The data come from the RNA Mapping Database (RMDB), libraries RFM100 and RFMREP. An RNA of 177 nucleotides, treated with 2A3 and DMS and read out base by base. The RNA was probed in 150 mM KOAc, 10 mM MgCl2 and 150 mM bicine (pH 8.5) at 24 C.
[RMDB]
RNA sequence: GGGAACGACUCGAGUAGAGUCGAAAAAACCGCGGUCGCAAGUCGUGACCUGGAGCCCGAAGAGCGAGGUCUCCGCCUAAGGCGUUGAGCGCCAAGGGUUUCGAGUCACUGGCUGCGAGAGCGGCUAUGGUAUAAGAGACUUCGGUCUCUUAUACCAAAAAGAAACAACAACAACAAC
Reactivity to 2A3 in 0.01 (KOAc 150mM, MgCl2 10mM, bicine 150mM(pH8.5), 24C), signal-to-noise 6, nucleotides 027 to 126: a000a000c030c000g020c020g030g220u020c000g000c010a050a050g010u000c000g000u000g000a000c010c000u010g010g000a000g000c000c000c000g020a150a070g030a010g020c010g010a030g050g170u050c000u010c020c000g000c000c020u260a230a100g030g000c010g020u040u120g020a020g040c010g000c000c010a020a040g000g000g000u000u000u000c010g010a010g010u000c000a030c080u170g010g010c000u000g000c000g010a010g010a000g000c000g010g010c010u110a140
Reactivity to DMS in 0.01 (KOAc 150mM, MgCl2 10mM, bicine 150mM(pH8.5), 24C), signal-to-noise 3, nucleotides 027 to 126: a070a120c000c000g000c010g000g000u010c000g000c010a010a030g020u010c080g020u000g010a020c020c000u010g000g000a010g000c000c000c000g020a220a110g030a280g030c020g000a080g000g030u010c020u000c030c000g020c000c020u040a120a140g000g020c000g000u000u010g010a030g000c010g030c010c010a050a300g000g000g010u000u000u000c020g010a100g000u000c000a000c020u060g040g010c000u000g070c000g000a030g000a150g010c020g010g010c050u000a040